[RMDB]
Structure probing data (DMS and 2A3) for a 177-nucleotide construct.
2A3 adducts were read by reverse transcription with SuperScript II with manganese.
The reactions ran in a buffer of 150 mM KOAc, 10 mM MgCl2 and 150 mM bicine (pH 8.5), at 24 C.
RNA sequence: GGGAACGACUCGAGUAGAGUCGAAAAUAAUCCAACGAGGGUUGCAAGGAAGGUGGUUGGAAAAGACAGCCCACAGACCACCGAUACAUAUUGUUAUUGGCACACCUGGUAUUGGUAAAUCAUUUGGCUUCCUUCCCCGUUUCGACGGGGAAGGAAGAAAAGAAACAACAACAACAAC
Reactivity to DMS in 0.01 (KOAc 150mM, MgCl2 10mM, bicine 150mM(pH8.5), 24C), signal-to-noise 1, nucleotides 027 to 126: u030a190a020u080c000c000a000a030c090g040a110g010g010g030u060u000g040c000a130a070g040g080a070a190g000g010u000g000g020u000u000g080g000a060a030a130a000g020a230c120a170g020c000c020c000a110c300a040g000a010c020c000a020c000c000g040a060u060a040c060a040u100a030u010u000g010u000u010a130u010u000g000g000c000a000c090a010c060c030u000g000g000u020a080u000u000g000g030u010a090a090a080u020c110a160u000u000u000g020g020
Reactivity to 2A3 in 0.01 (KOAc 150mM, MgCl2 10mM, bicine 150mM(pH8.5), 24C), signal-to-noise 2, nucleotides 027 to 126: u240a000a020u020c000c000a000a000c000g050a100g080g000g010u000u030g000c000a040a130g210g180a060a090g000g050u050g070g000u110u030g080g050a030a040a000a060g170a090c090a080g020c020c000c000a000c100a000g130a020c000c000a000c000c000g010a030u030a020c070a010u050a120u140u200g050u260u100a150u110u150g100g020c060a060c000a000c040c000u030g000g020u140a090u090u040g000g020u070a060a060a050u050c000a000u040u010u190g120g000